[RMDB]
RNA sequence: GGGAACGACUCGAGUAGAGUCGAAAAUCGAGGGCCUUCCUUCGUCGGUGAUCCCGCCUCUCCUCGUCGGUGAAUCCUCCCCCGGGGGGCCUCUUCCUAGGUCCGGAGUCUAUCUCCAUCUGGUCCGUCAUCACGAAGUUCGCUUCGUGAAAAAGAAACAACAACAACAAC
Reactivity to 2A3 in 0.01 (KOAc 150mM, MgCl2 10mM, bicine 150mM(pH8.5), 24C), signal-to-noise 9, nucleotides 027 to 129: u140c020g010a070g020g030g040c020c030u090u090c100c010u050u040c040g070u010c040g030g030u050g030a080u050c010c010c000g000c000c000u020c010u010c000c000u030c010g070u020c040g010g030u050g050a060a060u050c010c010u040c000c010c000c000c000g010g000g000g010g010g000c000c010u020c010u030u010c010c010u030a040g020g000u000c020c020g010g000a010g010u000c050u150a140u050c020u010c020c010a060u030c040u050g020g010u000c020c010g060u050c040a080
Reactivity to DMS in 0.01 (KOAc 150mM, MgCl2 10mM, bicine 150mM(pH8.5), 24C), signal-to-noise 9, nucleotides 027 to 129: u050c070g020a070g010g010g010c070c050u000u000c050c030u030u020c030g020u010c060g020g010u020g010a110u020c030c030c010g000c030c030u000c000u000c020c030u020c040g050u000c070g020g020u040g040a070a080u030c030c020u010c030c020c010c010c000g050g010g010g000g000g000c000c000u020c010u000u000c020c030u010a060g000g010u000c030c050g020g010a040g010u020c080u060a160u020c020u040c020c030a090u040c090u000g030g020u030c010c020g030u020c100a130